[RMDB]
RNA sequence: GGGAACGACUCGAGUAGAGUCGAAAAUGGCGGGCUCCUUAGCGGUAGGGGUCAGACUGCGACUGCUCGCGCAUCAUCGGUUCACAGGUCCGGAAUGGGAAGGUCGAGAUUGGGGAAGGUGAGUCCGAGUGGACCAUAGAUUCGUCUAUGGUCCACUAAAAGAAACAACAACAACAAC
Reactivity to 2A3 in 0.01 (KOAc 150mM, MgCl2 10mM, bicine 150mM(pH8.5), 24C), signal-to-noise 1, nucleotides 027 to 126: u070g030g020c020g000g000g070c040u050c020c030u060u120a060g040c040g080g030u040a000g000g030g030g000u060c030a010g010a030c120u120g010c020g050a060c030u060g040c060u040c040g080c020g000c010a010u060c030a000u070c030g080g000u070u050c040a040c060a100g040g010u020c020c040g030g030a080a130u090g050g010g000a030a010g030g000u030c070g020a020g000a120u080u160g020g000g000g030a020a020g040g000u000g030a030g040u060c010c020g010
Reactivity to DMS in 0.01 (KOAc 150mM, MgCl2 10mM, bicine 150mM(pH8.5), 24C), signal-to-noise 2, nucleotides 027 to 126: u010g010g040c050g010g010g020c010u010c050c070u000u020a120g030c070g030g000u000a080g010g010g000g020u000c070a050g010a070c070u000g020c060g010a060c040u010g000c060u000c070g010c090g020c060a060u010c110a070u010c060g010g000u000u000c080a080c170a100g010g000u020c030c020g010g000a060a070u010g010g010g000a090a070g020g010u020c050g010a120g030a120u000u000g000g030g010g010a070a040g000g040u010g010a090g020u000c030c070g010
Background:
The data come from the RNA Mapping Database (RMDB), library OK2TST. An RNA of 177 nucleotides, treated with 2A3 and DMS and read out base by base. Conditions: 150 mM KOAc, 10 mM MgCl2 and 150 mM bicine (pH 8.5), 24 C. High 2A3 reactivity points to a flexible backbone, as in loops and unpaired stretches. Reactivities are given for positions 27 through 126.